Source: RMDB library OK2TRN, as collected in RNAgym. Chemical mapping of a 177-nucleotide RNA with 2A3 and DMS. The 2A3 profile rests on 1,094 reads. The DMS profile rests on 2,329 reads. Conditions: 150 mM KOAc, 10 mM MgCl2 and 150 mM bicine (pH 8.5), 24 C. For 2A3 the reverse transcriptase was SuperScript II with manganese. Values are in units of 0.01, from 0 to 300, in steps of 10.
RNA sequence: GGGAACGACUCGAGUAGAGUCGAAAAAUAUGUAUAAAGCUGAUAGGACAAAGUAGCCCAAGUCUUACGUGAAAAUUUGGGAGCAGGCUGAGGUUUCUAUGAAUAACGUAAGUGAACACUCGUUUGACCGUUAUAGAAGGUUCGCCUUCUAUAACGGAAAAGAAACAACAACAACAAC
Reactivity to 2A3 in 0.01 (KOAc 150mM, MgCl2 10mM, bicine 150mM(pH8.5), 24C), signal-to-noise 2, nucleotides 027 to 126: a000u130a060u100g020u000a110u050a150a070a040g030c050u020g050a090u100a150g060g000a030c060a110a240a050g030u050a060g040c000c010c010a020a020g050u020c000u000u080a010c020g080u040g170a060a120a120a090u120u110u080g000g000g040a010g070c040a020g130g040c060u060g050a050g120g080u030u050u040c030u050a100u080g080a150a070u100a030a000c040g040u030a020a080g020u010g110a060a010c050a010c080u040c040g090u000u010u060g120a090
Reactivity to DMS in 0.01 (KOAc 150mM, MgCl2 10mM, bicine 150mM(pH8.5), 24C), signal-to-noise 3, nucleotides 027 to 126: a080u010a050u010g010u010a100u000a080a130a110g010c040u010g000a080u010a060g020g000a040c050a060a120a070g010u000a090g000c000c000c000a060a110g000u010c020u000u000a030c090g000u000g000a090a050a060a060u000u010u010g000g010g020a070g000c060a040g000g050c060u000g000a090g000g010u010u000u000c050u000a030u020g000a080a080u000a090a030c030g010u000a020a020g010u000g010a060a080c120a060c130u020c070g000u010u000u000g000a240